The data come from the RNA Mapping Database (RMDB), library OK3TST. The record gives the reactivity of an RNA of 207 nucleotides to 2A3 and DMS. The 2A3 profile rests on 2,950 reads. Reactivities are given for positions 27 through 156.

[RMDB]
RNA sequence: GGGAACGACUCGAGUAGAGUCGAAAAGCUAGUCGGAGACGACUAGCAACGAUCAGUUCGCUGAUCGGAACGUGCAUUCGAAUACGCUAGAAGCACGAAUAGGCGACGCAUAGCGUAAUCCAGAGGAAGCUCAUGACAUGAAUAACAAGGCGUCGCGCGUAGUAAUCACCUUCGGGUGAUUACUACGAAAAGAAACAACAACAACAAC
Reactivity to 2A3 in 0.01 (KOAc 150mM, MgCl2 10mM, bicine 150mM(pH8.5), 24C), signal-to-noise 5, nucleotides 027 to 156: g010c000u000a000g010u000c010g040g030a050g000a060c010g000a010c000u000a000g000c000a000a000c010g010a000u000c000a010g040u070u120c200g010c110u000g000a000u010c010g000g060a040a010c000g000u000g000c080a300u030u010c010g010a080a040u050a050c010g000c010u000a000g000a020a010g010c010a000c020g010a040a090u200a140g080g000c000g000a000c000g010c000a060u110a050g000c000g020u010a010a080u040c050c020a040g010a050g110g040a100a070g110c030u030c080a090u090g050a050c050a120u150g120a140a060u220a160a070c070a080a070g050g000c000g000u000c000g000c000g000
Reactivity to DMS in 0.01 (KOAc 150mM, MgCl2 10mM, bicine 150mM(pH8.5), 24C), signal-to-noise 2, nucleotides 027 to 156: g000c000u000a040g000u000c000g010g000a300g030a290c010g000a030c020u000a000g030c010a030a020c000g010a010u000c020a030g010u000u010c300g080c010u000g010a020u000c000g010g010a070a070c020g000u000g020c010a300u100u000c040g040a130a140u000a010c000g000c010u000a120g000a060a080g020c030a070c040g000a180a100u000a090g010g010c030g060a020c010g020c020a150u000a080g000c000g030u000a080a140u000c040c060a150g010a140g030g040a080a170g000c070u000c040a080u010g020a100c090a150u000g040a060a120u000a030a090c070a080a170g020g000c030g010u000c000g000c000g020